Notes: The record gives the reactivity of an RNA of 207 nucleotides to 2A3 and DMS. Source: RMDB library RNAMAK, as collected in RNAgym. 2A3 adducts were read by reverse transcription with SuperScript II with manganese. Conditions: 150 mM KOAc, 10 mM MgCl2 and 150 mM bicine (pH 8.5), 24 C. Values cover nucleotides 27 to 156.
RNA sequence: GGGAACGACUCGAGUAGAGUCGAAAAAGUGACUUCGGUCACUAUGCACCUUUGUGAAAGUGGAGCUGUAGGGCACUCGUACUGUGCCCAUUGGGCAUGUACGUUGCCAGCUACAGCGUUGAAACUUUCACUCUGGUUUUUCAGACGUUCGCGUCUGUAGAAGUCCCUAUUUCGAUAGGGACUUCUAAAAAGAAACAACAACAACAAC
Reactivity to 2A3 in 0.01 (KOAc 150mM, MgCl2 10mM, bicine 150mM(pH8.5), 24C), signal-to-noise 3, nucleotides 027 to 156: a000g000u000g000a000c040u100u160c300g140g000u000c000a000c010u040a090u210g090c010a020c000c000u010u000u000g000u010g020a010a000a000g000u000g000g010a010g010c000u010g020u020a010g010g000g010c010a010c120u070c010g010u000a010c100u120g030u030g060c000c000c030a090u070u190g000g000g020c000a000u020g000u000a000c020g010u000u010g010c000c000a070g050c000u000a000c000a000g010c000g000u030u000g000a000a000a000c000u000u000u000c000a000c000u000c000u000g000g020u030u000u040u090u170c000a010g020a020c000g030u060u070c200g030c010g130u070c000u100g000
Reactivity to DMS in 0.01 (KOAc 150mM, MgCl2 10mM, bicine 150mM(pH8.5), 24C), signal-to-noise 1, nucleotides 027 to 156: a030g020u000g000a010c010u000u000c300g040g030u000c010a010c000u010a020u010g030c090a170c010c000u000u000u000g000u000g000a030a020a020g000u000g010g010a300g020c010u000g000u000a000g010g010g020c020a020c110u010c020g060u000a000c020u010g050u000g030c000c000c010a020u000u010g050g000g000c010a040u000g000u000a030c010g030u000u010g000c020c010a080g010c020u000a000c000a010g030c000g000u000u010g010a200a140a080c010u000u000u000c010a000c010u000c030u000g010g010u000u000u000u030u000c000a030g000a040c000g010u000u000c220g030c070g020u000c010u000g010